Annotation
This 177-nucleotide RNA was probed chemically with 2A3 and DMS.
RNA sequence: GGGAACGACUCGAGUAGAGUCGAAAAGGCAUCUGGCGCGGCGUAGACCAGAACGACAAGGCCGUCGAGGCCAUCAUCAAGAAGCACGGGUACGUGAUCGUCGAGCCUAAGAUCGACGGGUGCCGUGCAAUUGUUCUCUUUUCGAAGAGAACAAUUGAAAAGAAACAACAACAACAAC
Reactivity to 2A3 in 0.01 (KOAc 150mM, MgCl2 10mM, bicine 150mM(pH8.5), 24C), signal-to-noise 8, nucleotides 027 to 126: g030g000c020a050u010c040u070g010g000c020g000c020g120g000c050g090u090a020g040a130c010c020a020g040a100a050c040g050a020c060a100a150g020g000c020c010g040u140c140g070a080g020g000c000c020a020u020c010a020u020c010a010a140g090a090a010g010c020a000c040g050g010g030u130a060c050g040u090g090a110u130c010g000u000c000g010a020g030c000c030u060a070a040g070a120u050c010g010a010c000g000g010g040u030g010c000c000g000u010g000
Reactivity to DMS in 0.01 (KOAc 150mM, MgCl2 10mM, bicine 150mM(pH8.5), 24C), signal-to-noise 9, nucleotides 027 to 126: g010g010c030a110u000c020u000g010g010c040g010c060g020g030c040g010u010a110g010a130c030c040a070g010a070a120c110g000a050c090a120a160g010g010c010c010g000u010c190g010a240g010g010c010c010a050u010c120a080u000c110a090a110g000a100a120g010c010a010c010g010g010g010u000a060c080g010u000g010a090u010c030g000u000c010g010a060g010c070c140u010a100a120g000a080u000c010g000a020c010g000g000g010u000g010c000c000g010u000g000

DMS adducts were read by reverse transcription with MarathonRT. For 2A3 the reverse transcriptase was SuperScript II with manganese. It was measured as part of the RMDB library OK2TRN. For DMS, 68,547 sequencing reads were counted. The RNA was probed in 150 mM KOAc, 10 mM MgCl2 and 150 mM bicine (pH 8.5) at 24 C.